Structure probing data (DMS and 2A3) for a 177-nucleotide construct.
RNA sequence: GGGAACGACUCGAGUAGAGUCGAAAAGAUAUGGACUCGCUCCCCACCGAACUACGAGAGAAGGUUCGGAAACGAACCCAUCCUCGCGAGGCGAGUCCUAAGUCAAACAUGAACUUCGGUUCAUGAACUAAUACUUAUCGUUCGCGAUAAGUAUUAGAAAAGAAACAACAACAACAAC
Reactivity to DMS in 0.01 (KOAc 150mM, MgCl2 10mM, bicine 150mM(pH8.5), 24C), signal-to-noise 9, nucleotides 027 to 126: g010a070u010a200u010g010g010a010c000u000c000g010c010u000c060c020c040c090a300c170c080g000a080a090c090u010a140c020g010a070g000a090g030a200a180g010g010u000u000c000g010g000a020a050a100c010g010a010a010c000c000c050a100u000c070c010u000c010g000c070g010a090g010g010c010g000a020g000u000c000c000u000a020a080g010u000c080a080a080a200c000a010u000g000a000a010c000u000u010c190g030g000u000u000c000a000u000g000a080a230
Reactivity to 2A3 in 0.01 (KOAc 150mM, MgCl2 10mM, bicine 150mM(pH8.5), 24C), signal-to-noise 8, nucleotides 027 to 126: g050a040u160a120u240g000g000a000c000u000c000g020c010u150c040c070c010c010a090c020c060g050a130a110c100u160a090c300g020a010g010a010g050a220a040g020g000u000u000c000g000g000a040a020a010c000g000a000a000c000c000c030a110u060c000c020u010c020g050c040g030a020g030g000c000g000a000g000u000c000c000u010a040a010g060u030c080a070a090a150c010a030u000g000a010a010c010u050u090c300g120g000u000u000c000a000u010g020a030a010

It was measured as part of the RMDB library TTRDEL.